[RMDB]
RNA sequence: GGGAACGACUCGAGUAGAGUCGAAAAGCAGCUGCAAGAGCUUCUAGAACGUGCUCUGCUGUCUGUUGAUGUGCUAUACAGCUGCGUUUGUCCGCAUGCUCUUGCGAUCAUCAGGUAGACAACCAUGGUGUGGUUUUUGGUUCGCCAAAAACCACACAAAAGAAACAACAACAACAAC
Reactivity to DMS in 0.01 (KOAc 150mM, MgCl2 10mM, bicine 150mM(pH8.5), 24C), signal-to-noise 1, nucleotides 027 to 126: g030c020a020g010c050u000g010c190a070a100g000a020g030c010u030u000c160u000a150g000a130a110c200g010u000g020c010u000c070u000g000c000u000g000u010c030u000g000u000u010g000a030u000g020u000g030c040u000a040u000a080c220a030g010c070u000g020c000g000u000u000u000g000u000c300c080g010c030a050u020g000c040u000c060u000u000g030c010g000a090u000c010a020u020c030a020g000g010u000a020g020a070c070a040a130c080c090a060u000g010
Reactivity to 2A3 in 0.01 (KOAc 150mM, MgCl2 10mM, bicine 150mM(pH8.5), 24C), signal-to-noise 1, nucleotides 027 to 126: g000c010a000g040c000u060g000c070a140a070g020a000g040c000u070u070c040u100a120g040a140a050c090g090u020g010c030u000c030u010g050c000u000g020u030c010u030g050u040u030g000a000u050g050u090g030c020u030a040u050a190c050a090g010c070u020g000c020g030u030u130u120g130u100c030c000g030c030a040u110g020c000u070c030u000u050g000c020g010a030u010c020a010u000c010a000g000g040u050a000g090a110c050a110a030c060c000a050u130g020

The record gives the reactivity of an RNA of 177 nucleotides to DMS and 2A3. For DMS the reverse transcriptase was MarathonRT. For 2A3 the reverse transcriptase was SuperScript II with manganese. The reactions ran in a buffer of 150 mM KOAc, 10 mM MgCl2 and 150 mM bicine (pH 8.5), at 24 C. Reactivities are given for positions 27 through 126. For 2A3, 908 sequencing reads were counted.